[RMDB]
RNA sequence: GGGAACGACUCGAGUAGAGUCGAAAAGUAGAUGACACCAGUGAUGUCACAUCAUUCUAUCCUUCUGCAUACCAAGAACACCUGAACUUUAUCCCGGCGCCUACUACAGGAUCAGGUUGCACUCGGAUAAUCCGCUACUAUUCGUAGUAGCGGAUUAAAAAGAAACAACAACAACAAC
Reactivity to 2A3 in 0.01 (KOAc 150mM, MgCl2 10mM, bicine 150mM(pH8.5), 24C), signal-to-noise 2, nucleotides 027 to 126: g010u060a000g030a170u060g050a020c050a040c050c070a020g070u030g120a130u070g100u190c030a020c020a080u070c020a040u110u060c020u040a120u070c000c020u000u040c020u050g040c030a060u050a210c030c030a120a050g050a120a000c020a010c060c020u040g050a080a040c040u100u110u070a130u120c030c020c000g060g010c020g010c030c000u020a090c020u020a030c070a030g000g040a080u060c020a020g050g000u000u060g000c000a020c050u010c010g020g010a010
Reactivity to DMS in 0.01 (KOAc 150mM, MgCl2 10mM, bicine 150mM(pH8.5), 24C), signal-to-noise 3, nucleotides 027 to 126: g030u000a080g020a080u000g010a060c030a050c060c080a170g000u010g010a110u000g000u000c030a080c060a090u010c050a070u000u010c060u000a110u010c030c020u000u020c030u010g030c030a040u000a090c050c050a030a080g000a070a080c080a030c010c020u000g000a060a050c070u010u000u010a070u010c010c010c010g020g000c040g000c020c020u010a040c060u000a100c080a040g010g000a090u000c080a060g010g010u000u000g010c070a050c060u000c060g010g010a180
Source: RMDB library OK2TST, as collected in RNAgym. An RNA of 177 nucleotides, treated with 2A3 and DMS and read out base by base. As a SHAPE reagent, 2A3 marks flexible, mostly unpaired nucleotides at the ribose 2'-OH. Values cover nucleotides 27 to 126. The reactions ran in a buffer of 150 mM KOAc, 10 mM MgCl2 and 150 mM bicine (pH 8.5), at 24 C.